RNA sequence: GGGAACGACUCGAGUAGAGUCGAAAAAUUAGACCACCGAAAGGUGAUGUGGUAGGGGGGCGUGCUAUAUGGAUAGAAGUUUCUUCGAGAGGAGGGAUGGACCGUAUAGUAUCGCGGAUCCUGGUAACUCGAUAGUACGUUUCGACGUACUAUCGAGAAAAGAAACAACAACAACAAC
Reactivity to DMS in 0.01 (KOAc 150mM, MgCl2 10mM, bicine 150mM(pH8.5), 24C), signal-to-noise 3, nucleotides 027 to 126: a130u020u000a130g010a060c030c000a030c000c020g020a110a090a150g000g010u000g000a070u010g020u000g030g020u000a110g020g020g000g000g000g020c000g040u000g000c000u010a000u000a000u010g000g000a240u010a110g020a200a160g000u000u000u010c010u000u000c010g000a190g010a260g000g010a020g020g000g000a020u010g010g020a090c010c000g010u000a020u010a030g010u000a000u060c000g000c020g000g000a030u010c000c000u000g000g000u010a040a120
Reactivity to 2A3 in 0.01 (KOAc 150mM, MgCl2 10mM, bicine 150mM(pH8.5), 24C), signal-to-noise 3, nucleotides 027 to 126: a000u150u090a040g100a090c000c040a020c000c000g070a060a030a050g160g010u090g050a120u100g060u080g040g070u110a050g000g010g000g000g010g020c000g010u000g000c000u020a020u000a020u020g020g000a030u070a300g040a080a000g010u010u020u000c000u000u010c060g030a040g000a050g120g010a020g000g000g030a010u020g000g020a000c000c010g000u000a030u010a000g020u010a010u250c010g000c000g010g030a010u000c020c010u010g040g030u040a080a040
The record gives the reactivity of an RNA of 177 nucleotides to DMS and 2A3. For 2A3, 2,394 sequencing reads were counted. The RNA was probed in 150 mM KOAc, 10 mM MgCl2 and 150 mM bicine (pH 8.5) at 24 C.